[RMDB]
RNA sequence: GGGAACGACUCGAGUAGAGUCGAAAACCAGCGACUUCGGUCGCUGGAAAAAAGAUAUGGACCAGUGUUGGGAGUCCCUGUCGGAAACGACAGAAGGACAUCGAUCAACAACAUACUCUGGUCCUAAGUCAAAAAUCGCGUUCUUCGGAACGCGAAAUCUAAAAAUCAGCUUCGGCUGAUUUUUAGAAAAAGAAACAACAACAACAAC
Reactivity to 2A3 in 0.01 (KOAc 150mM, MgCl2 10mM, bicine 150mM(pH8.5), 24C), signal-to-noise 1, nucleotides 027 to 156: c000c000a000g000c030g010a030c020u090u080c260g080g010u000c010g000c000u040g000g040a000a000a000a000a000a150g030a000u030a000u030g000g000a000c010c000a020g000u010g010u040u020g050g290g060a120g000u010c000c000c010u000g040u010c010g020g000a000a000a000c020g000a000c050a010g060a090a080g000g000a000c020a080u110c080g220a120u270c060a000a070c000a030a000c000a010u130a120c030u010c000u080g000g000u000c000c000u000a000a000g000u000c010a020a040a040a150a130u110c020g000c000g040u000u000c000u020u060c180g110g010a000a000c000g020c000g010a020a010a030
This 207-nucleotide RNA was probed chemically with 2A3.
Reactivities are rounded to 0.1 and cut off at 0 and 3.
The reactions ran in a buffer of 150 mM KOAc, 10 mM MgCl2 and 150 mM bicine (pH 8.5), at 24 C.